RNA sequence: GGGAACGACUCGAGUAGAGUCGAAAAGGACGAGCAGAAUCCAACCCGUGCAUCACGAAAUGGAACAAGCUCGAAGGCGUGUUGUUAGAAUUUCGGAGAGAUCUGGGUUGCGAAGGGUACGCCAUGACUACUGCGAAGUAUUCGUACUUUGCAGUAGAAAAGAAACAACAACAACAAC
Reactivity to 2A3 in 0.01 (KOAc 150mM, MgCl2 10mM, bicine 150mM(pH8.5), 24C), signal-to-noise 9, nucleotides 027 to 126: g050g030a030c020g010a010g000c010a020g050a100a040u000c000c000a010a020c020c000c000g010u060g010c050a140u120c020a040c020g020a020a030a070u080g020g020a040a020c030a070a030g010c010u020c050g050a030a040g060g020c040g000u050g020u040u070g100u050u050a050g040a130a060u020u070u120c040g010g010a090g000a000g000a120u020c030u070g020g000g030u030u060g050c040g030a040a020g020g000g000u030a010c010g000c000c010a030u070g050a020
Reactivity to DMS in 0.01 (KOAc 150mM, MgCl2 10mM, bicine 150mM(pH8.5), 24C), signal-to-noise 9, nucleotides 027 to 126: g010g020a130c050g010a090g020c040a100g010a300a180u000c020c010a020a070c120c040c010g020u000g010c260a100u000c030a080c020g000a020a070a060u000g010g010a040a040c060a090a110g000c010u000c040g020a130a120g010g010c030g020u000g010u000u000g000u000u000a090g010a120a040u000u000u000c010g010g000a100g010a120g000a070u000c030u010g010g000g010u000u000g000c140g010a040a070g000g000g010u000a040c040g010c020c020a090u010g010a240
Chemical mapping of a 177-nucleotide RNA with 2A3 and DMS. The RNA was probed in 150 mM KOAc, 10 mM MgCl2 and 150 mM bicine (pH 8.5) at 24 C. For DMS the reverse transcriptase was MarathonRT. The DMS profile rests on 67,614 reads.